[RMDB]
Source: RMDB library RNAMAK, as collected in RNAgym. This 207-nucleotide RNA was probed chemically with 2A3. The RNA was probed in 150 mM KOAc, 10 mM MgCl2 and 150 mM bicine (pH 8.5) at 24 C.
RNA sequence: GGGAACGACUCGAGUAGAGUCGAAAAGGUGACUCGCUGGGCCACGAGCGAUGUAUGUUGUCAGGAGCUGAAGCGCGCACGGCUCCUUGGAUUUACAUACCGCUCGCUCCUGGCCUGUGCUGAAGCGCGCACGGCAACCGAAAGGUGCGAAUUACAACCCUCAGAUGUUGUUCGCAACAUCUGAGGGAAAAGAAACAACAACAACAAC
Reactivity to 2A3 in 0.01 (KOAc 150mM, MgCl2 10mM, bicine 150mM(pH8.5), 24C), signal-to-noise 1, nucleotides 027 to 156: g100g010u030g000a020c000u000c010g000c000u020g000g000g040c000c000a000c020g000a000g000c010g010a010u200g050u000a000u000g000u020u010g120u280c300a100g020g000a000g050c000u030g040a190a050g000c010g000c020g000c000a010c000g000g000c000u000c000c020u040u090g230g000a040u110u010u060a010c000a000u000a000c000c050g020c020u000c010g000c000u010c010c020u000g010g000c060c000u000g000u000g000c000u030g000a210a080g000c000g000c000g000c010a020c020g000g010c010a000a030c000c010g020a050a020a020g000g000u030g010c030g030a030a020u090u120a030c020a060a070